[RMDB]
RNA sequence: GGGAACGACUCGAGUAGAGUCGAAAAUAUUUCAGUCUUGUUCUAUUACAGAGGACCAGCCACAACCGCGCGCACUCUCUUUCAAACAUACACACUCUCUCACUUAAAGACACAUUUAGUUUUCGGCAAAACGGCAUCUCAGCGUGCGAUUGAGACACUCCUAUCAUCGAUUCGUCGAUGAUAGGAGAAAAGAAACAACAACAACAAC
Reactivity to DMS in 0.01 (KOAc 150mM, MgCl2 10mM, bicine 150mM(pH8.5), 24C), signal-to-noise 1, nucleotides 027 to 156: u010a090u000u020u000c050a180g000u000c030u000u000g040u000u000c030u000a110u000u000a110c060a090g050a090g020g000a090c090c090a120g060c000c040a070c090a060a030c040c070g020c020g020c070g030c010a230c090u020c040u000c010u000u000u000c040a040a050a010c050a170u000a110c070a040c090a070c040u000c020u010c030u000c020a030c090u000u020a090a060a110g000a120c060a040c060a050u000u000u000a040g060u000u000u000u010c020g050g000c070a040a040a080a020c050g000g010c030a120u000c040u000c070a100g070c030g000u000g000c080g100a110u000u000g000a100g000a120c070a150
Reactivity to 2A3 in 0.01 (KOAc 150mM, MgCl2 10mM, bicine 150mM(pH8.5), 24C), signal-to-noise 3, nucleotides 027 to 156: u180a080u070u120u110c010a020g050u010c040u020u050g050u090u000c030u070a170u160u150a120c070a090g120a110g010g050a030c010c020a010g010c000c040a090c030a080a010c040c010g010c010g000c000g030c010a030c020u020c020u020c000u040u100u180c090a060a110a000c030a050u120a040c060a000c020a060c080u030c000u000c010u000c000a030c020u140u160a100a200a000g080a020c050a010c010a100u110u080u040a040g050u050u030u010u020c010g070g000c000a050a050a010a000c040g040g000c030a030u040c040u000c040a050g020c030g020u060g000c010g030a070u080u050g010a000g000a000c110a000
This 207-nucleotide RNA was probed chemically with DMS and 2A3. 2A3 adducts were read by reverse transcription with SuperScript II with manganese.